[RMDB]
Structure probing data (DMS and 2A3) for a 177-nucleotide construct. Conditions: 150 mM KOAc, 10 mM MgCl2 and 150 mM bicine (pH 8.5), 24 C.
RNA sequence: GGGAACGACUCGAGUAGAGUCGAAAACACGCUGGGGCCUGUCUGACGCUGAGGCACGAAAGCCAGGGUAGCGAACGGGAUUAGAUACCCCGGUAGUCUUGGCUGUAAACGAUGAACACUAGGUUGGGAUCUAUUCGUCCUUCGGGACGAAUAGAUCAAAAGAAACAACAACAACAAC
Reactivity to DMS in 0.01 (KOAc 150mM, MgCl2 10mM, bicine 150mM(pH8.5), 24C), signal-to-noise 1, nucleotides 027 to 126: c120a080c150g020c050u000g000g000g010g000c030c010u020g000u000c000u000g030a070c110g040c000u000g000a060g000g000c010a010c000g020a100a190a000g000c030c000a030g000g000g000u010a060g000c020g070a140a190c100g010g000g000a020u000u040a160g000a110u060a170c070c000c000c030g000g000u020a080g050u000c000u000u000g000g020c000u000g010u030a030a040a050c090g020a030u000g040a020a070c020a040c060u000a050g000g000u000u020g000g020
Reactivity to 2A3 in 0.01 (KOAc 150mM, MgCl2 10mM, bicine 150mM(pH8.5), 24C), signal-to-noise 2, nucleotides 027 to 126: c040a020c000g010c020u030g000g000g000g030c000c010u020g000u010c010u050g010a030c020g010c020u040g030a040g000g060c030a000c130g080a110a100a000g000c000c000a000g050g010g000u030a010g040c000g000a030a010c000g010g000g000a000u060u070a100g090a180u100a080c000c000c000c000g000g000u040a030g000u030c000u010u000g000g000c000u080g000u200a130a150a020c050g040a010u040g040a090a010c030a010c010u020a080g030g020u000u040g030g000

Values cover nucleotides 27 to 126. The data come from the RNA Mapping Database (RMDB), library RFM100. For 2A3, 1,103 sequencing reads were counted.